This 177-nucleotide RNA was probed chemically with DMS and 2A3. The data come from the RNA Mapping Database (RMDB), library OK2TST. For 2A3, 4,268 sequencing reads were counted. For DMS the reverse transcriptase was MarathonRT. The RNA was probed in 150 mM KOAc, 10 mM MgCl2 and 150 mM bicine (pH 8.5) at 24 C.
RNA sequence: GGGAACGACUCGAGUAGAGUCGAAAACAGAAUCUGGGCUAAUGAGGACCAUACAAGUACCGGUCACACCUUCACUGAUGGACUUUGGUGUAGUCUGGAUGCCUGCAUCAUUUAGCCCUUGCAGGUACUAGCAUGAUCAUUUCGAUGAUCAUGCUAGAAAAGAAACAACAACAACAAC
Reactivity to DMS in 0.01 (KOAc 150mM, MgCl2 10mM, bicine 150mM(pH8.5), 24C), signal-to-noise 4, nucleotides 027 to 126: c110a110g010a110a080u000c070u000g020g010g050c010u000a020a020u000g000a100g020g040a110c030c030a090u000a100c070a070a060g020u000a030c130c080g000g010u000c140a080c080a200c010c010u000u000c280a080c090u000g010a050u000g000g000a110c080u000u010u000g020g020u010g010u000a040g020u000c020u000g000g010a080u000g000c030c000u000g000c030a070u000c090a120u000u000u000a100g000c030c040c010u000u010g010c060a010g000g010u010a130
Reactivity to 2A3 in 0.01 (KOAc 150mM, MgCl2 10mM, bicine 150mM(pH8.5), 24C), signal-to-noise 3, nucleotides 027 to 126: c020a000g120a120a100u080c040u040g000g000g020c020u030a030a060u100g040a050g050g050a040c010c020a020u090a140c070a110a080g060u030a080c020c050g020g020u030c010a020c030a030c060c020u130u140c060a060c100u110g040a080u080g030g040a010c030u040u080u110g060g000u130g020u050a040g000u000c000u010g050g030a060u070g050c000c010u010g000c010a030u050c010a010u140u160u220a030g000c000c030c000u000u020g000c000a000g050g010u060a100